[RMDB]
RNA sequence: GGGAACGACUCGAGUAGAGUCGAAAAGAAGAGGCGCUAAAGCUUAAUCAGCUUGAUCAAAUUUUAUCACCCAUUCAUGAACGCAUGGUCACUGAUUUGGAAACCGAAUUAGCCCAUUUUAUGAUGAACAAUGGCGCUUUGUCGCUCGGUUCACCGACGCGCGUUGAUAAUUCGUUAUCAACGCGCGAAAAGAAACAACAACAACAAC
Reactivity to 2A3 in 0.01 (KOAc 150mM, MgCl2 10mM, bicine 150mM(pH8.5), 24C), signal-to-noise 1, nucleotides 027 to 156: g150a000a030g060a060g030g010c000g030c120u050a110a060a080g020c000u000u000a010a040u150c040a000g030c000u140u100g020a000u130c110a030a140a180u150u130u120u040a100u270c070a090c010c020c000a070u100u000c040a050u170g100a240a020c030g010c160a000u120g010g010u020c000a000c030u030g020a030u000u000u080g020g050a160a000a030c030c020g080a050a070u050u000a020g000c000c000c010a000u000u030u010u050a130u030g110a060u050g000a030a010c020a150a000u040g020g000c180g000c170u140u040u060g210u130c050g000c000u040c050g000g000u020u020c050a020c110c000g060a020
About this RNA:
This 207-nucleotide RNA was probed chemically with 2A3. For 2A3 the reverse transcriptase was SuperScript II with manganese. Source: RMDB library OK3TST, as collected in RNAgym.